RNA sequence: GGGAACGACUCGAGUAGAGUCGAAAAGAUAUGGAUGCAUGGAGCGAUAAGUCGCUGGUCGGAAACGACCACGACUUUUGACGCUUCAGUAUGUCCUAAGUCAAACACGCACGUUCGCGUGCGUGAAUCUACCUAGGCAGUUCGCUGCCUAGGUAGAAAAAGAAACAACAACAACAAC
Reactivity to 2A3 in 0.01 (KOAc 150mM, MgCl2 10mM, bicine 150mM(pH8.5), 24C), signal-to-noise 2, nucleotides 027 to 126: g020a000u020a020u140g010g000a000u030g030c160a150u030g030g020a000g020c000g080a100u040a270a010g000u000c000g070c300u020g010g040u010c000g000g030a010a020a030c010g000a000c000c010a000c000g030a000c000u000u000u020u090g010a000c040g000c000u010u010c010a000g020u050a070u240g030u040c000c000u020a120a010g050u030c040a020a140a080c010a000c010g040c010a020c020g000u050u080c300g020c000g090u000g020c010g000u000g010a000a070
Reactivity to DMS in 0.01 (KOAc 150mM, MgCl2 10mM, bicine 150mM(pH8.5), 24C), signal-to-noise 3, nucleotides 027 to 126: g010a000u000a120u010g000g020a020u010g020c220a120u010g010g000a010g000c000g000a100u000a000a020g010u000c000g010c300u000g000g020u010c000g010g000a030a060a100c000g010a020c010c000a030c000g000a010c000u000u000u000u000g010a160c070g000c000u010u000c000a010g010u000a050u000g020u000c000c000u010a030a130g000u010c020a130a130a270c030a010c000g000c000a010c010g020u000u000c220g020c010g010u000g020c010g010u000g010a040a050
Background
Chemical mapping of a 177-nucleotide RNA with 2A3 and DMS. For 2A3 the reverse transcriptase was SuperScript II with manganese. The 2A3 profile rests on 2,509 reads. For DMS, 2,549 sequencing reads were counted. It was measured as part of the RMDB library TTRDEL. For DMS the reverse transcriptase was MarathonRT.